Overview:
The record gives the reactivity of an RNA of 177 nucleotides to 2A3 and DMS. For DMS the reverse transcriptase was MarathonRT. For DMS, 2,151 sequencing reads were counted. Source: RMDB library RFM100, as collected in RNAgym.
RNA sequence: GGGAACGACUCGAGUAGAGUCGAAAAUGUUCGGACUGACAACCACUCCGCGAAAGGCUGCAAGAAGUCUCUUGGAAUAGAGCACGAAACAGGGUGAUAGUCCCGUACUGCAGGCGAGUAUCGGACGAAAGAACCAUCUCUUCGGAGAUGGUUCUUUAAAAGAAACAACAACAACAAC
Reactivity to 2A3 in 0.01 (KOAc 150mM, MgCl2 10mM, bicine 150mM(pH8.5), 24C), signal-to-noise 1, nucleotides 027 to 126: u190g090u130u070c090g010g060a100c040u140g000a000c040a010a010c040c000a050c060u010c000c010g000c020g020a040a010a010g120g060c010u000g010c000a000a000g000a000a000g020u060c000u000c000u000u010g000g000a000a000u020a020g010a000g040c000a000c030g000a000a020a040c020a040g020g000g000u030g000a000u000a000g000u000c000c000c000g000u000a000c000u000g000c000a030g040g010c000g000a000g000u020a000u030c000g010g000a000c040g090
Reactivity to DMS in 0.01 (KOAc 150mM, MgCl2 10mM, bicine 150mM(pH8.5), 24C), signal-to-noise 3, nucleotides 027 to 126: u040g010u030u010c050g050g030a190c090u000g000a080c060a160a180c110c140a190c190u000c000c020g000c000g060a070a160a140g030g000c030u020g030c020a000a010g000a000a050g020u060c020u000c000u020u020g000g050a300a040u000a010g020a040g010c000a010c000g050a300a090a070c000a280g000g020g010u000g040a190u020a150g120u010c000c000c000g000u010a290c000u000g010c010a000g010g000c000g000a040g030u000a140u000c050g000g020a050c200g000